[RMDB]
RNA sequence: GGGAACGACUCGAGUAGAGUCGAAAAGAUAUGGAACACAGGGAGCUUGUGGUCGGAAACGACCAGAAGCAUCGAUCUGUUUUCCUAAGUCAAAAGAUAGUUCUAGCGUUCGCGCUAGAACUAUCAAGUAGUUAAAUAUGUUCGCAUAUUUAACUACAAAAGAAACAACAACAACAAC
Reactivity to DMS in 0.01 (KOAc 150mM, MgCl2 10mM, bicine 150mM(pH8.5), 24C), signal-to-noise 5, nucleotides 027 to 126: g010a020u000a030u010g000g000a010a020c040a020c000a010g000g010g010a010g030c000u000u000g000u000g000g000u000c000g010g000a010a010a020c000g010a010c010c000a010g000a010a010g010c000a190u000c190g000a110u000c000u000g000u000u000u000u000c000c000u000a010a120g000u000c000a090a090a140a150g000a010u000a010g000u000u000c000u000a000g000c000g030u010u030c230g020c010g020c000u000a000g000a000a000c000u000a000u000c000a040a090
Reactivity to 2A3 in 0.01 (KOAc 150mM, MgCl2 10mM, bicine 150mM(pH8.5), 24C), signal-to-noise 5, nucleotides 027 to 126: g000a000u010a000u050g000g000a000a000c010a010c000a020g010g020g010a030g010c000u190u040g250u000g300g000u010c000g000g000a020a010a000c000g000a000c000c000a010g040a010a010g000c000a010u170c010g000a010u000c000u000g010u010u000u010u000c000c000u000a000a010g010u000c030a020a020a040a210g010a000u000a000g000u000u000c000u000a000g000c010g020u060u060c300g020c010g000c160u000a000g000a000a000c000u000a000u000c000a000a010
This 177-nucleotide RNA was probed chemically with DMS and 2A3. The data come from the RNA Mapping Database (RMDB), library TTRDEL. The reactions ran in a buffer of 150 mM KOAc, 10 mM MgCl2 and 150 mM bicine (pH 8.5), at 24 C. DMS (dimethyl sulfate) methylates the pairing face of unpaired adenines and cytosines. 2A3 adducts were read by reverse transcription with SuperScript II with manganese. For 2A3, 27,951 sequencing reads were counted.